[RMDB]
RNA sequence: GGGAACGACUCGAGUAGAGUCGAAAAAUUUAACGGCCAGGACGGUCACCUUUGGGGUGGUGACAAGUGUGAUCACUUGGGUGGUGGCUGUGUUUGCGUAUCUCCCAGGAAUCUCGUUUACCAGAUCAGGACUGAUGCAUUUCGAUGCAUCAGUCCUAAAAGAAACAACAACAACAAC
Reactivity to 2A3 in 0.01 (KOAc 150mM, MgCl2 10mM, bicine 150mM(pH8.5), 24C), signal-to-noise 1, nucleotides 027 to 126: a000u240u130u100a030a050c020g090g040c000c000a000g010g020a000c000g010g050u020c000a060c000c040u120u090u150g040g000g000g000u010g000g030u060g060a000c000a060a030g150u090g000u000g250a040u140c000a000c000u060u000g130g000g000u000g010g010u000g020g010c010u000g000u000g000u080u000u180g020c110g030u040a080u020c200u000c030c010c000a000g000g010a090a000u070c040u040c040g080u150u180u070a170c070c040a040g000a140u190c040